[RMDB]
RNA sequence: GGGAACGACUCGAGUAGAGUCGAAAAUCGCAACUACCUGCCAAAGUGUGGUACAUUGCUUGGACCACUUUAUAACAAAGUUGGUGCACAUGGGGAUAAAAGGUGGAAAGAAAGUGACUUUCAGUUGCACCAGCUAAAACUUCGGUUUUAGCUGGUGAAAAGAAACAACAACAACAAC
Reactivity to 2A3 in 0.01 (KOAc 150mM, MgCl2 10mM, bicine 150mM(pH8.5), 24C), signal-to-noise 2, nucleotides 027 to 126: u070c010g000c000a020a010c020u040a060c000c000u040g000c020c010a150a180a050g070u140g020u060g100g030u040a020c020a080u060u250g030c070u050u130g040g000a010c000c000a010c000u090u060u040a240u070a070a060c070a030a100a000g040u140u090g020g000u040g040c000a000c000a070u110g010g020g010g010a000u050a080a110a020a000g000g040u060g040g100a110a040a000g050a030a100a040g110u070g060a030c050u030u100u040c040a100g010u040u050g060
Reactivity to DMS in 0.01 (KOAc 150mM, MgCl2 10mM, bicine 150mM(pH8.5), 24C), signal-to-noise 3, nucleotides 027 to 126: u000c100g030c080a020a120c100u000a040c060c010u000g010c030c070a050a090a180g000u010g030u000g000g000u010a070c080a060u010u010g010c110u000u000g020g010a030c020c000a010c030u000u000u000a060u010a150a170c210a030a050a020g020u000u010g040g020u010g000c010a040c060a060u000g000g010g000g010a110u000a070a060a050a080g010g010u010g020g010a030a040a060g020a040a050a060g010u000g010a070c110u010u000u010c040a060g010u010u010g000
Background: This 177-nucleotide RNA was probed chemically with 2A3 and DMS. For 2A3 the reverse transcriptase was SuperScript II with manganese. It was measured as part of the RMDB library OK2TRN. The RNA was probed in 150 mM KOAc, 10 mM MgCl2 and 150 mM bicine (pH 8.5) at 24 C.